[RMDB]
RNA sequence: GGGAACGACUCGAGUAGAGUCGAAAAAGUUCAGCAACUGCUUUAUUGAUUCAACAUACGUUAGAACAUACGAAACACAUACGUGUAGGUUCUGGAGGAAUCAUGUUACCUAACCAUGCUCCAUUAACGGUAAUCCUCAUUUCGAUGAGGAUUACCGAAAAGAAACAACAACAACAAC
Reactivity to 2A3 in 0.01 (KOAc 150mM, MgCl2 10mM, bicine 150mM(pH8.5), 24C), signal-to-noise 2, nucleotides 027 to 126: a000g040u030u070c020a020g060c020a070a090c030u060g060c030u080u140u060a120u080u170g130a170u000u080c000a010a020c020a110u270a070c120g050u080u130a050g000a020a010c020a010u150a040c060g090a050a190a000c090a000c000a070u220a210c120g000u040g030u070a020g010g090u020u000c050u090g040g030a120g030g060a050a000u110c010a030u020g060u020u080a080c040c030u000a060a000c050c040a060u070g000c020u000c000c030a120u100u110a130a030
Reactivity to DMS in 0.01 (KOAc 150mM, MgCl2 10mM, bicine 150mM(pH8.5), 24C), signal-to-noise 2, nucleotides 027 to 126: a070g030u000u010c080a080g040c090a110a080c060u010g020c130u000u000u000a040u000u000g000a110u000u000c010a070a040c090a170u010a120c190g000u000u000a060g000a040a060c100a080u000a130c210g010a110a120a100c060a000c170a140u000a100c150g000u000g010u000a060g000g000u000u000c010u000g000g000a080g000g000a040a020u000c030a020u000g010u000u000a070c070c040u000a060a080c140c090a010u000g030c100u000c040c020a120u020u000a060a170